[RMDB]
RNA sequence: GGGAACGACUCGAGUAGAGUCGAAAAAGGCCCGGACGCGCGGAGGACCGACAGCCGGGCGCGCUUUCGCGAUCGCGCGGGCGGUGGUGCAUGGCCGCUCCCAGCCCGUGGCGCGAGCCGUCUGCUCAAGAACGCAACAUUUCGAUGUUGCGUUCUUAAAAGAAACAACAACAACAAC
Reactivity to DMS in 0.01 (KOAc 150mM, MgCl2 10mM, bicine 150mM(pH8.5), 24C), signal-to-noise 1, nucleotides 027 to 126: a070g030g000c000c000c010g000g000a090c170g030c040g030c010g000g000a100g000g000a140c000c020g040a110c130a160g000c060c010g020g000g040c030g010c030g000c030u080u030u010c030g000c040g040a130u060c170g060c050g040c050g040g000g000c020g000g010u000g010g010u040g010c000a170u010g000g000c100c070g000c000u000c070c030c000a220g010c020c000c030g020u030g000g010c000g000c000g000a060g000c100c020g000u030c020u000g000c030u010c280
Reactivity to 2A3 in 0.01 (KOAc 150mM, MgCl2 10mM, bicine 150mM(pH8.5), 24C), signal-to-noise 2, nucleotides 027 to 126: a000g060g000c000c000c000g000g010a060c050g070c010g010c010g030g050a090g060g130a250c030c010g050a030c060a000g000c020c020g030g000g000c000g000c020g020c000u080u100u070c000g000c000g060a110u060c040g000c020g000c000g230g000g010c050g000g050u140g020g030u030g000c110a220u210g240g000c130c020g000c010u030c000c000c000a000g000c000c000c000g000u040g010g000c020g000c010g010a000g020c000c000g010u060c020u060g010c000u000c040

Chemical mapping of a 177-nucleotide RNA with DMS and 2A3. 2A3 is a SHAPE reagent: it acylates the 2'-hydroxyl of flexible nucleotides of all four kinds. DMS adducts were read by reverse transcription with MarathonRT. The 2A3 profile rests on 1,504 reads.